An RNA of 177 nucleotides, treated with DMS and read out base by base. The RNA was probed in 150 mM KOAc, 10 mM MgCl2 and 150 mM bicine (pH 8.5) at 24 C. For DMS, 1,008 sequencing reads were counted. It was measured as part of the RMDB library TTRDEL.
[RMDB]
RNA sequence: GGGAACGACUCGAGUAGAGUCGAAAAGAUAUGGACCUUCGAUAAGCUGAGUAUCGGAAACGAUACCAGCUUUUGACGAAGUGUCCUAAGUCAAACGGGGCGAACAUGUUCGCAUGUUCGCCCCGAACCUAGAGGUUGAGUUCGCUCAACCUCUAGGAAAAGAAACAACAACAACAAC
Reactivity to DMS in 0.01 (KOAc 150mM, MgCl2 10mM, bicine 150mM(pH8.5), 24C), signal-to-noise 1, nucleotides 027 to 126: g000a050u010a300u000g000g000a010c000c000u000u000c000g020a140u000a020a040g010c010u000g000a100g040u000a000u000c000g000g000a100a040a180c000g000a020u000a020c000c000a000g010c010u000u000u000u010g020a140c160g020a020a010g030u000g020u000c000c000u010a020a100g000u000c030a080a090a240c010g000g000g040g040c030g050a040a000c000a020u010g000u010u000c170g010c020a010u010g000u000u000c010g000c010c000c000c000g000a010a020